[RMDB]
RNA sequence: GGGAACGACUCGAGUAGAGUCGAAAAUUCAAGAUGAGUCUGGGGCUUCCCUUGGGGUUGGCCGGGGCAGUGCUUGUGCAUGGUGGGGUCUGGACCAGGCCUUUCUGCCUGCUGUGAUCUGGGAUGCAGAUGAUCGUAUAUUCGUAUACGAUCAUCUAAAAGAAACAACAACAACAAC
Reactivity to 2A3 in 0.01 (KOAc 150mM, MgCl2 10mM, bicine 150mM(pH8.5), 24C), signal-to-noise 2, nucleotides 027 to 126: u100u030c040a030a020g070a110u090g020a020g090u010c020u030g030g000g030g010c000u050u040c000c010c000u030u080g080g020g000g010u110u100g050g020c030c020g020g000g010g000c020a030g020u020g050c030u140u150g050u110g070c020a040u090g050g040u040g020g060g000g010u000c030u060g000g010a040c020c030a020g010g030c020c000u030u160u010c030u050g010c010c000u010g010c030u060g040u060g060a060u000c030u030g000g010g040a030u080g070c020
Reactivity to DMS in 0.01 (KOAc 150mM, MgCl2 10mM, bicine 150mM(pH8.5), 24C), signal-to-noise 6, nucleotides 027 to 126: u010u010c090a080a090g000a100u000g010a110g010u000c040u010g010g010g000g000c090u000u000c020c020c010u000u000g020g010g010g020u010u010g010g020c060c060g010g000g010g020c070a060g010u000g010c060u000u010g010u010g010c050a040u000g010g020u000g010g000g000g000u000c030u000g000g000a090c180c040a050g000g010c030c080u000u000u000c070u000g010c010c010u000g010c070u000g010u000g000a060u000c050u000g000g010g000a100u000g010c170
This 177-nucleotide RNA was probed chemically with 2A3 and DMS. The DMS profile rests on 19,016 reads. Reactivities are given for positions 27 through 126. Conditions: 150 mM KOAc, 10 mM MgCl2 and 150 mM bicine (pH 8.5), 24 C. 2A3 adducts were read by reverse transcription with SuperScript II with manganese. DMS adducts were read by reverse transcription with MarathonRT. The data come from the RNA Mapping Database (RMDB), library OK2TST. High 2A3 reactivity points to a flexible backbone, as in loops and unpaired stretches.